[RMDB]
RNA sequence: GGGAACGACUCGAGUAGAGUCGAAAAACAGGAAAUGUCAAGUGGAGCACAGACACAAAGCUCAAGUUCAUGUGGGGAAACCUGACUUUGGCUUCUACCGAAAAGAAGGAUGUUUUGGUUCCCUGCCUGUAAAAGUGAAGUUCGCUUCACUUUUACAAAAAGAAACAACAACAACAAC
Reactivity to DMS in 0.01 (KOAc 150mM, MgCl2 10mM, bicine 150mM(pH8.5), 24C), signal-to-noise 7, nucleotides 027 to 126: a070c070a060g000g020a060a080a070u000g010u000c070a090a100g020u000g010g010a090g020c040a090c110a090g010a090c140a100c070a060a090a090g010c070u000c060a080a070g010u010u000c070a080u000g010u000g020g000g000g000a060a030a040c010c010u000g010a030c030u000u000u010g010g000c010u000u000c010u000a100c150c140g010a070a080a070a050g000a050a030g010g010a070u000g010u000u000u010u000g010g000u000u000c000c000c000u000g010c060c210
Reactivity to 2A3 in 0.01 (KOAc 150mM, MgCl2 10mM, bicine 150mM(pH8.5), 24C), signal-to-noise 5, nucleotides 027 to 126: a000c030a010g080g090a040a090a120u150g020u060c060a080a110g040u050g110g020a030g020c050a020c020a080g120a060c030a020c030a120a120a010g040c030u040c080a030a030g030u110u100c080a050u150g020u050g040g020g000g000a030a060a060c000c000u000g020a030c000u070u050u080g150g010c000u050u000c010u080a130c060c110g100a110a090a000a010g040a020a010g040g020a030u050g040u010u050u110u060g020g000u010u010c000c000c000u010g010c000c020
Background
An RNA of 177 nucleotides, treated with DMS and 2A3 and read out base by base. Conditions: 150 mM KOAc, 10 mM MgCl2 and 150 mM bicine (pH 8.5), 24 C. For DMS, 10,441 sequencing reads were counted. Source: RMDB library OK2TST, as collected in RNAgym. DMS adducts were read by reverse transcription with MarathonRT. For 2A3, 8,176 sequencing reads were counted. 2A3 adducts were read by reverse transcription with SuperScript II with manganese.